Structure probing data (2A3 and DMS) for a 177-nucleotide construct.

RNA sequence: GGGAACGACUCGAGUAGAGUCGAAAAUGAGGUAAUCCAUCUUUAAAACCAUCGCCGUUAGAGGUUGCUUCUGAUAUUUUCGGUUAAGCGACCCAUGAAAUGGUGAUGACCUGAGGUAUGGAACAUCUAAUUUACAGGUCUUCGGACCUGUAAAUUAAAAAGAAACAACAACAACAAC
Reactivity to 2A3 in 0.01 (KOAc 150mM, MgCl2 10mM, bicine 150mM(pH8.5), 24C), signal-to-noise 7, nucleotides 027 to 126: u180g020a030g040g060u090a080a080u010c000c000a010u010c010u020u060u040a080a130a020a050c040c000a010u000c000g000c000c000g010u010u030a090g050a080g210g000u000u010g000c000u030u060c000u010g010a030u040a290u170u220u090u030c010g000g000u110u190a020a000g000c000g000a000c010c000c010a060u150g100a010a030a030u050g000g010u000g000a000u000g010a020c010c040u040g010a010g030g020u140a010u050g010g000a010a030c020a020u030c010
Reactivity to DMS in 0.01 (KOAc 150mM, MgCl2 10mM, bicine 150mM(pH8.5), 24C), signal-to-noise 5, nucleotides 027 to 126: u020g020a060g000g020u010a090a180u000c000c000a030u000c020u000u000u000a040a070a200a180c180c000a000u000c010g020c010c000g010u000u000a110g000a150g020g010u000u000g010c000u000u000c000u000g000a040u020a140u020u020u030u010c010g010g000u010u080a000a000g050c010g010a010c010c000c030a090u030g010a080a040a000u010g010g000u000g010a000u000g000a040c120c120u010g000a030g000g010u060a000u000g000g010a030a080c190a050u010c030
It was measured as part of the RMDB libraries RFM100 and RFMREP.